[RMDB]
RNA sequence: GGGAACGACUCGAGUAGAGUCGAAAAGGGAAGAGUUAUCUUUUCUGCUUAACGGCCUGCCAACCCUGGAAUCGGUUCAGCCGGAGGUAGGGUCCAGCGGUCGGAAGAGCACCGCACGUCGCGCGGUUUCCAUCACGUUUUUCGAAACGUGAUGGAAAAAAGAAACAACAACAACAAC
Reactivity to DMS in 0.01 (KOAc 150mM, MgCl2 10mM, bicine 150mM(pH8.5), 24C), signal-to-noise 3, nucleotides 027 to 126: g000g000g020a040a050g040a070g020u030u050a060u000c000u030u000u020u000c050u000g040c030u000u020a110a300c020g020g000c000c000u010g060c030c270a140a080c030c020c000u000g000g000a100a030u010c000g030g000u010u010c260a170g010c010c000g000g000a010g000g000u000a010g010g000g000u000c110c190a150g000c050g000g030u010c000g000g000a100a050g000a010g000c020a060c020c010g000c000a070c090g000u040c140g000c100g000c000g010g010u000
Reactivity to 2A3 in 0.01 (KOAc 150mM, MgCl2 10mM, bicine 150mM(pH8.5), 24C), signal-to-noise 4, nucleotides 027 to 126: g110g020g040a070a050g070a030g060u050u080a220u110c010u030u010u040u000c060u070g020c000u030u000a030a000c030g010g000c000c020u120g000c020c040a040a020c020c000c000u020g090g150a080a070u060c010g040g030u160u150c090a080g080c020c000g010g000a010g060g060u120a020g010g020g010u100c070c030a000g010c000g010g000u000c020g000g000a120a120g010a030g000c030a000c010c000g040c000a050c080g240u150c060g000c010g000c000g030g000u000
An RNA of 177 nucleotides, treated with DMS and 2A3 and read out base by base.
For 2A3, 2,347 sequencing reads were counted.
The reactions ran in a buffer of 150 mM KOAc, 10 mM MgCl2 and 150 mM bicine (pH 8.5), at 24 C.
Reactivities are given for positions 27 through 126.
It was measured as part of the RMDB libraries RFM100 and RFMREP.
DMS adducts were read by reverse transcription with MarathonRT.